[RMDB]
The data come from the RNA Mapping Database (RMDB), library TTRDEL. An RNA of 177 nucleotides, treated with 2A3 and DMS and read out base by base. The 2A3 profile rests on 27,623 reads. The DMS profile rests on 13,939 reads. DMS adducts were read by reverse transcription with MarathonRT.

RNA sequence: GGGAACGACUCGAGUAGAGUCGAAAAGAUAUGGAUAGGCGUGAACUACGUUCUCGGAAACGAGGGAGACGCACGACCUAUCCUAAGUCAAAACGCUAUAACAGCUCUUCGGAGCUGUUAUAGCGAACGUACUUUAUAAGUUCGCUUAUAAAGUACGAAAAGAAACAACAACAACAAC
Reactivity to 2A3 in 0.01 (KOAc 150mM, MgCl2 10mM, bicine 150mM(pH8.5), 24C), signal-to-noise 9, nucleotides 027 to 126: g020a020u080a040u120g000g010a000u000a010g010g010c020g010u010g010a110a050c080u110a060c280g080u230u130c020u010c010g030g050a110a090a050c020g000a010g020g070g030a190g030a020c040g110c030a000c010g290a300c000c000u000a000u000c000c000u010a030a000g010u010c020a010a010a070a130c020g010c000u000a000u000a010a000c000a010g000c000u000c020u070u170c300g070g000a000g000c000u000g010u000u000a000u000a000g000c000g000a000a000
Reactivity to DMS in 0.01 (KOAc 150mM, MgCl2 10mM, bicine 150mM(pH8.5), 24C), signal-to-noise 8, nucleotides 027 to 126: g010a050u000a300u010g000g010a010u000a010g000g000c000g010u000g010a080a090c140u010a260c050g010u000u000c000u000c000g000g000a110a100a220c010g000a020g000g000g030a180g000a040c070g000c010a010c000g000a130c000c000u000a000u000c000c000u000a010a080g010u000c050a070a080a080a160c010g010c000u000a010u000a000a000c000a010g020c000u000c000u000u010c210g030g000a010g000c000u000g000u000u000a000u000a000g010c000g000a010a030